[RMDB]
RNA sequence: GGGAACGACUCGAGUAGAGUCGAAAAUUCCUCUUCAUGGAAUCGGUAUAGAUUAUGUCGGGGAGACCGACAGCAUAGCUUAAAACCAUCGUGAAGUCGUUGCUUCGUGCCAUGGCUCGUGAUGACCAGGGAGUAUUGCAUUCGUGCAAUACUCCCUAAAAGAAACAACAACAACAAC
Reactivity to 2A3 in 0.01 (KOAc 150mM, MgCl2 10mM, bicine 150mM(pH8.5), 24C), signal-to-noise 2, nucleotides 027 to 126: u010u000c000c000u030c000u030u010c070a080u150g190g010a020a040u130c100g100g000u300a190u050a240g060a080u020u110a070u200g040u020c000g010g000g060g010a180g140a040c000c000g020a030c000a020g020c000a010u100a090g000c000u110u270a020a000a070a080c010c000a000u040c000g060u000g040a020a010g000u000c010g030u020u010g000c000u040u030c120g070u150g000c080c030a030u060g000g000c010u010c020g060u010g060a000u060g030a100c030c030
Reactivity to DMS in 0.01 (KOAc 150mM, MgCl2 10mM, bicine 150mM(pH8.5), 24C), signal-to-noise 1, nucleotides 027 to 126: u000u030c000c000u040c050u020u040c030a030u000g000g070a090a030u000c120g000g040u000a200u010a070g000a060u010u020a060u000g030u000c010g000g010g000g000a060g000a240c000c000g000a030c070a000g000c160a030u010a100g000c020u040u000a040a050a050a090c030c000a050u000c000g020u080g000a090a000g000u000c070g030u000u000g020c020u020u030c090g040u020g000c030c070a050u000g000g020c050u000c050g050u000g010a080u000g000a070c140c050